[RMDB]
RNA sequence: GGGAACGACUCGAGUAGAGUCGAAAACCCUCUAACCAGCGGUCUUGGUCUUGCACACAACGGUAAGCCAGUGGUAAUGUCAGUGCAAGAAGGAUAUUACCAUAGCACUGUCACGAGGGGAACGCAGGUAGCGCGAUAUUUUCGAAUAUCGCGCUACAAAAGAAACAACAACAACAAC
Reactivity to DMS in 0.01 (KOAc 150mM, MgCl2 10mM, bicine 150mM(pH8.5), 24C), signal-to-noise 2, nucleotides 027 to 126: c000c000c040u010c030u000a160a020c060c030a050g010c030g000g020u020c030u000u020g030g000u030c000u010u010g000c010a070c060a120c230a180a110c150g000g020u010a050a060g010c060c010a030g010u000g000g000u000a020a030u000g000u000c000a080g010u000g030c010a090a120g020a070a080g000g000a080u000a030u000u000a020c010c000a060u010a140g010c040a010c020u000g000u000c060a070c120g000a070g010g000g000g000a100a050c070g010c100a060g020
Reactivity to 2A3 in 0.01 (KOAc 150mM, MgCl2 10mM, bicine 150mM(pH8.5), 24C), signal-to-noise 3, nucleotides 027 to 126: c000c000c000u010c010u040a050a050c000c000a000g020c000g090g020u010c010u050u100g030g000u040c000u000u000g010c010a010c010a000c000a220a110c080g160g030u100a030a040g060c040c010a010g010u000g060g010u000a040a000u030g020u020c010a030g050u000g190c030a070a090g100a110a080g080g000a020u010a020u060u040a060c000c000a020u070a040g070c090a010c010u010g000u180c010a010c130g030a030g000g030g000g010a050a060c040g020c040a020g090

Description:
Structure probing data (DMS and 2A3) for a 177-nucleotide construct. The 2A3 profile rests on 1,780 reads. The reactions ran in a buffer of 150 mM KOAc, 10 mM MgCl2 and 150 mM bicine (pH 8.5), at 24 C.